[RMDB]
Source information: Chemical mapping of a 177-nucleotide RNA with DMS and 2A3. The reactions ran in a buffer of 150 mM KOAc, 10 mM MgCl2 and 150 mM bicine (pH 8.5), at 24 C. Reactivities are given for positions 27 through 126. The DMS profile rests on 4,788 reads. The data come from the RNA Mapping Database (RMDB), library TTRDEL. DMS (dimethyl sulfate) methylates the pairing face of unpaired adenines and cytosines.
RNA sequence: GGGAACGACUCGAGUAGAGUCGAAAAGAUAUGGAGGGAGGUCGACGAUCAGCCUGAUCGGAAACGAUCAGGGCUGGGAGACUCUCCUAAGUCAAAAGCUACCGCUGAGUUCGCUCAGCGGUAGCAACCAUUAGAACAACUUCGGUUGUUCUAAUGGAAAAGAAACAACAACAACAAC
Reactivity to DMS in 0.01 (KOAc 150mM, MgCl2 10mM, bicine 150mM(pH8.5), 24C), signal-to-noise 4, nucleotides 027 to 126: g000a080u000a160u000g000g020a170g000g010g010a060g000g010u010c000g000a090c150g000a090u010c010a010g000c000c000u010g000a010u000c000g000g010a070a100a170c010g010a010u000c000a040g010g020g020c000u000g000g000g000a100g000a030c000u010c010u000c000c000u000a030a100g000u010c030a090a060a120a110g000c000u000a000c010c000g000c010u000g010a020g010u000u020c250g010c000u000c000a010g010c010g000g010u000a000g000c010a000a020
Reactivity to 2A3 in 0.01 (KOAc 150mM, MgCl2 10mM, bicine 150mM(pH8.5), 24C), signal-to-noise 4, nucleotides 027 to 126: g020a040u190a080u270g100g030a090g120g190g020a060g050g050u020c010g000a300c030g000a090u040c000a000g030c000c000u000g000a010u000c000g010g010a050a020a050c010g000a000u000c020a020g040g060g060c010u000g000g020g010a030g000a000c010u010c000u020c120c000u020a080a020g040u040c020a050a030a020a190g020c010u010a010c010c020g020c000u020g000a000g020u070u190c290g120c170u020c000a000g000c000g010g000u010a000g000c000a000a000